The record gives the reactivity of an RNA of 177 nucleotides to DMS and 2A3. Values are in units of 0.01, from 0 to 300, in steps of 10. As a SHAPE reagent, 2A3 marks flexible, mostly unpaired nucleotides at the ribose 2'-OH.

RNA sequence: GGGAACGACUCGAGUAGAGUCGAAAAGAUAUGGACCGCAUAGACAUGCUCGAGGGUCGGAAACGACCCGAGAGCAACAGCUAUGUCGGUCCUAAGUCAAAGCUAGGGUACUUCGGUACCCUAGCAACUGAAUGGAUAUCUUCGGAUAUCCAUUCAGAAAAGAAACAACAACAACAAC
Reactivity to DMS in 0.01 (KOAc 150mM, MgCl2 10mM, bicine 150mM(pH8.5), 24C), signal-to-noise 4, nucleotides 027 to 126: g010a030u000a070u010g000g000a010c000c000g000c000a010u000a000g000a030c040a300u010g030c000u000c000g010a300g000g010g020u000c010g040g000a010a010a030c020g010a010c000c000c000g000a210g000a010g050c000a020a010c210a060g000c010u000a000u010g000u030c010g030g010u000c000c000u000a000a060g000u010c020a110a180a200g010c000u000a000g000g010g020u000a000c000u000u010c210g020g010u000a000c000c000c000u000a000g000c010a030a030
Reactivity to 2A3 in 0.01 (KOAc 150mM, MgCl2 10mM, bicine 150mM(pH8.5), 24C), signal-to-noise 2, nucleotides 027 to 126: g010a000u010a010u050g000g000a000c000c000g010c000a000u000a000g020a030c160a210u300g010c000u000c010g020a090g000g000g000u000c000g030g020a080a010a000c000g010a000c000c140c010g000a000g000a010g020c000a010a020c030a000g000c000u010a000u040g110u250c030g000g000u000c000c000u010a000a000g000u000c010a090a130a000g010c000u000a000g000g010g000u010a010c010u040u130c300g080g010u010a000c010c000c000u000a000g000c000a000a000